The data come from the RNA Mapping Database (RMDB), library RFM100. An RNA of 177 nucleotides, treated with DMS and 2A3 and read out base by base. 2A3 adducts were read by reverse transcription with SuperScript II with manganese. For 2A3, 1,537 sequencing reads were counted. DMS adducts were read by reverse transcription with MarathonRT.
RNA sequence: GGGAACGACUCGAGUAGAGUCGAAAACAAACCCCGAACAAGCUCGGUUCGCAAGGGCGGCCGCCCCUUUCGGAUAAGCUAAGCCACGUCGGAUCACAAAGGUGACAAAGCACUCAAAUCCGGUCACUACCAACGAAAGCUUCGGCUUUCGUUGGUAAAAAGAAACAACAACAACAAC
Reactivity to DMS in 0.01 (KOAc 150mM, MgCl2 10mM, bicine 150mM(pH8.5), 24C), signal-to-noise 1, nucleotides 027 to 126: c230a000a300a090c080c000c000c070g010a110a000c250a220a040g000c030u000c170g050g020u000u000c010g080c100a140a020g090g000g050c060g000g050c070c140g000c100c000c000c020u000u000u000c020g050g000a000u030a250a010g000c030u000a100a150g000c080c040a000c100g000u000c090g000g000a090u000c110a070c130a000a080a000g000g000u000g000a020c070a070a100a120g030c100a250c010u030c040a050a040a020u000c050c000g010g000u000c000a050c210
Reactivity to 2A3 in 0.01 (KOAc 150mM, MgCl2 10mM, bicine 150mM(pH8.5), 24C), signal-to-noise 3, nucleotides 027 to 126: c070a030a070a020c010c010c000c000g060a040a050c040a130a000g010c020u030c150g100g020u100u070c030g020c040a020a060g030g000g000c050g090g010c040c050g040c000c020c000c010u020u030u040c010g040g000a020u030a030a030g010c070u120a090a030g040c000c000a060c010g060u040c030g010g060a040u050c040a010c010a110a030a060g140g000u040g030a010c030a020a090a010g030c020a020c030u160c010a050a090a100u120c070c000g000g000u030c020a020c060